[RMDB]
RNA sequence: GGGAACGACUCGAGUAGAGUCGAAAAGUACCUCAAAGUUACAUAGUGGAUUAACAGGCCUCCCCCUCUGGAAGGCAUUUGUUACCUGAUUUACAAUCUAGAGGAAGCUAAUCCUGCAUAGCGGCCAAUCACGAUUAGUAUUCGUACUAAUCGUGAUAAAAGAAACAACAACAACAAC
Reactivity to DMS in 0.01 (KOAc 150mM, MgCl2 10mM, bicine 150mM(pH8.5), 24C), signal-to-noise 9, nucleotides 027 to 126: g020u000a120c020c000u000c040a050a120a230g010u000u000a070c130a080u000a080g010u010g010g010a110u010u000a020a030c020a050g000g010c000c000u000c020c020c020c190c180u000c120u010g010g010a030a030g000g010c020a040u000u010u010g020u000u000a040c050c020u010g000a080u000u000u000a090c170a060a090u010c020u000a210g010a020g010g010a120a090g010c030u010a060a100u000c020c010u000g020c110a070u000a060g000c050g010g010c070c100a110
Reactivity to 2A3 in 0.01 (KOAc 150mM, MgCl2 10mM, bicine 150mM(pH8.5), 24C), signal-to-noise 6, nucleotides 027 to 126: g010u030a050c000c010u050c030a110a090a010g050u080u070a040c030a070u170a120g110u100g090g010a070u100u080a040a020c020a010g010g010c010c000u010c020c010c000c000c020u110c030u030g010g010a020a020g010g000c020a030u140u090u060g030u010u010a020c000c010u010g040a070u050u080u110a080c080a070a060u000c010u040a030g000a010g040g000a070a010g010c000u040a060a060u050c010c000u020g040c030a020u050a080g050c050g040g000c020c030a030

Background: This 177-nucleotide RNA was probed chemically with DMS and 2A3. The RNA was probed in 150 mM KOAc, 10 mM MgCl2 and 150 mM bicine (pH 8.5) at 24 C. The DMS profile rests on 13,979 reads. The 2A3 profile rests on 11,774 reads. Source: RMDB library OK2TRN, as collected in RNAgym.